Chemical mapping of a 177-nucleotide RNA with 2A3 and DMS. The 2A3 profile rests on 7,996 reads. 2A3 adducts were read by reverse transcription with SuperScript II with manganese. It was measured as part of the RMDB library OK1LIB. High DMS reactivity at an A or C suggests that its Watson-Crick edge is free. DMS adducts were read by reverse transcription with MarathonRT. For DMS, 11,474 sequencing reads were counted.

RNA sequence: GGGAACGACUCGAGUAGAGUCGAAAAUGAGGUUAAAUCGAGAUAUGGAAUGAUUUCAUCAGGAACGAUGGAUUUGACGAUCUCGGAGGUCAUUUCAUGCACAGAAUUCCUGGGAGCACUGAUAGUAGGUAAUCCCUAAUUUCGAUUAGGGAUUACCAAAAGAAACAACAACAACAAC
Reactivity to 2A3 in 0.01 (KOAc 150mM, MgCl2 10mM, bicine 150mM(pH8.5), 24C), signal-to-noise 8, nucleotides 027 to 126: u090g000a030g040g060u090u110a030a080a040u140c050g020a010g010a060u100a130u160g070g030a090a060u080g040a050u030u070u100c040a090u020c030a030g200g080a080a060c090g020a030u060g010g020a030u060u030u080g090a040c020g000a020u020c030u020c030g030g010a010g010g020u020c010a020u020u010u010c020a020u060g030c080a050c010a070g110a080a110u060u060c000c000u020g030g010g030a060g010c060a020c050u040g050a050u040a080g130u030a040
Reactivity to DMS in 0.01 (KOAc 150mM, MgCl2 10mM, bicine 150mM(pH8.5), 24C), signal-to-noise 5, nucleotides 027 to 126: u020g000a060g010g000u000u020a060a090a040u010c030g010a050g000a080u010a020u030g000g000a110a080u010g020a030u010u010u020c010a030u000c050a080g020g050a110a220c130g010a020u000g000g010a020u000u010u000g030a300c110g000a010u000c000u000c040g000g000a090g010g010u030c090a010u000u000u020c020a030u000g000c110a070c140a090g010a080a130u010u000c020c000u000g030g000g000a080g000c090a070c070u000g000a050u010a060g000u020a080